Structure probing data (DMS and 2A3) for a 177-nucleotide construct. The reactions ran in a buffer of 150 mM KOAc, 10 mM MgCl2 and 150 mM bicine (pH 8.5), at 24 C. The DMS profile rests on 1,522 reads. It was measured as part of the RMDB library OK2TST. For DMS the reverse transcriptase was MarathonRT. 2A3 adducts were read by reverse transcription with SuperScript II with manganese. Reactivities are given for positions 27 through 126.
[RMDB]
RNA sequence: GGGAACGACUCGAGUAGAGUCGAAAAGUGUUACCAUUUGUGGUGCCUGUGAGGAGGUUUGGGUUGGCCACAGUUGAGUCAGGGACAGAUUGUUCUGCUAGUGUCCAUUGACCAGAGUGUCACUGUCUCGACCUUGACACUUCGGUGUCAAGGUCGAAAAAGAAACAACAACAACAAC
Reactivity to DMS in 0.01 (KOAc 150mM, MgCl2 10mM, bicine 150mM(pH8.5), 24C), signal-to-noise 1, nucleotides 027 to 126: g020u000g020u010u010a090c090c020a160u000u000u010g020u010g010g040u000g030c060c030u000g000u010g030a100g010g010a080g000g000u000u000u000g010g030g020u010u000g040g040c040c020a040c120a040g030u000u000g020a080g010u000c030a060g010g020g010a040c040a070g000a170u000u000g010u000u000c110u010g000c040u000a070g010u000g000u000c000c040a080u020u000g000a080c020c010a060g010a110g040u000g000u010c040a070c020u000g030u000c090
Reactivity to 2A3 in 0.01 (KOAc 150mM, MgCl2 10mM, bicine 150mM(pH8.5), 24C), signal-to-noise 1, nucleotides 027 to 126: g050u040g030u070u080a040c020c040a100u000u030u220g110u040g020g000u030g020c060c000u030g070u110g080a150g080g050a040g110g000u130u150u140g110g030g000u110u060g060g000c010c010a010c000a040g060u030u070g060a090g010u010c030a030g030g010g000a010c000a010g150a130u080u060g080u130u050c040u090g070c040u040a020g100u010g000u000c020c030a120u030u060g000a010c000c000a010g040a040g080u080g010u020c020a000c050u010g070u100c000